[RMDB]
RNA sequence: GGGAACGACUCGAGUAGAGUCGAAAAACAUAGGUUGGGCCAUAGGCGCUGCGGUUCAUCAUCUUGGCCUCGCCAGGACCGCUCCCGUUCUACUACUUGGCGUCGCGGAUACCGGGUUGGAAAACAAUUCUUGAUCGAUAUUCGUAUCGAUCAAGAAAAAAGAAACAACAACAACAAC
Reactivity to DMS in 0.01 (KOAc 150mM, MgCl2 10mM, bicine 150mM(pH8.5), 24C), signal-to-noise 2, nucleotides 027 to 126: a070c110a090u040a110g020g010u000u010g020g000g010c030c020a090u000a060g020g030c080g000c070u000g000c020g030g010u010u000c060a110u010c090a080u010c070u000u000g010g000c010c060u010c180g000c020c020a070g010g000a090c070c010g000c020u000c000c010c010g010u000u000c050u000a080c060u010a050c080u000u000g000g000c010g010u000c070g010c080g010g010a050u000a050c070c010g010g000g010u000u000g000g020a070a040a090a050c120a050a170
Background
This 177-nucleotide RNA was probed chemically with DMS. The reactions ran in a buffer of 150 mM KOAc, 10 mM MgCl2 and 150 mM bicine (pH 8.5), at 24 C. The DMS profile rests on 1,732 reads. It was measured as part of the RMDB library M2PK90.